An RNA of 177 nucleotides, treated with DMS and read out base by base.

RNA sequence: GGGAACGACUCGAGUAGAGUCGAAAAGAAAGAAAGAAUAAAGCCUUAGGGAGUAUCUACAGUGGCAAGUACUUUUCCACCAAGAAAGAAGAAUACUACCAGUGUAGAUACUCUCUAAGGCUUUAAAAUCCAAGCUUACGUUCGCGUAAGCUUGGAUAAAAGAAACAACAACAACAAC
Reactivity to DMS in 0.01 (KOAc 150mM, MgCl2 10mM, bicine 150mM(pH8.5), 24C), signal-to-noise 2, nucleotides 027 to 126: g010a130a110a080g010a130a010a110g000a140a090u000a000a000a020g000c000c000u000u010a000g000g000g010a040g010u000a000u000c000u000a000c000a000g040u010g030g030c030a000a010g000u030a020c010u000u010u000u010c030c120a160c160c300a090a170g000a060a160a030g000a050a020g010a030a070u010a010c020u000a300c000c010a000g000u040g000u000a000g010a000u040a000c000u000c030u000c000u000a000a000g010g000c000u020u020u000a000a020a150
For DMS the reverse transcriptase was MarathonRT. The RNA was probed in 150 mM KOAc, 10 mM MgCl2 and 150 mM bicine (pH 8.5) at 24 C.